Structure probing data (2A3 and DMS) for a 177-nucleotide construct. Conditions: 150 mM KOAc, 10 mM MgCl2 and 150 mM bicine (pH 8.5), 24 C.
RNA sequence: GGGAACGACUCGAGUAGAGUCGAAAAGAAAAGAGACCGAUGCGUCUCGAGAGCCGUGGUGGAAGGCUCCACUCACCAAUAAAAGCAUCGUCAAUAAACCUGAUCAGGGAAGAUCGAUAAAAGAAAAGGGUAUAGAUUAGUUCGCUAAUCUAUACCCAAAAGAAACAACAACAACAAC
Reactivity to 2A3 in 0.01 (KOAc 150mM, MgCl2 10mM, bicine 150mM(pH8.5), 24C), signal-to-noise 5, nucleotides 027 to 126: g060a000a090a000a020g010a010g010a010c060c090g030a040u060g020c060g030u020c010u000c000g040a030g000a020g020c020c040g040u120g040g040u100g070g080a140a100g050g000c040u010c000c000a020c010u140c010a080c010c030a050a040u150a080a040a010a000g040c010a020u030c010g060u070c040a070a100u100a260a100a050c010c020u000g010a040u050c060a050g000g130g100a050a030g030a030u030c040g020a050u160a160a140a030a010g190a020a080a000a040
Reactivity to DMS in 0.01 (KOAc 150mM, MgCl2 10mM, bicine 150mM(pH8.5), 24C), signal-to-noise 3, nucleotides 027 to 126: g000a130a110a120a110g000a040g000a020c010c000g000a030u030g000c080g010u000c000u010c010g000a130g000a120g000c000c020g000u000g030g040u040g010g010a050a170g020g000c030u000c020c030a030c080u010c090a220c040c100a080a180u010a060a040a110a140g000c010a000u000c000g010u040c120a090a100u050a070a110a130c040c000u000g000a030u010c050a130g020g020g000a100a120g000a000u000c020g000a060u080a040a010a090a090g010a070a110a090a100

About this RNA: For DMS, 3,310 sequencing reads were counted. DMS adducts were read by reverse transcription with MarathonRT. Source: RMDB library OK1LIB, as collected in RNAgym.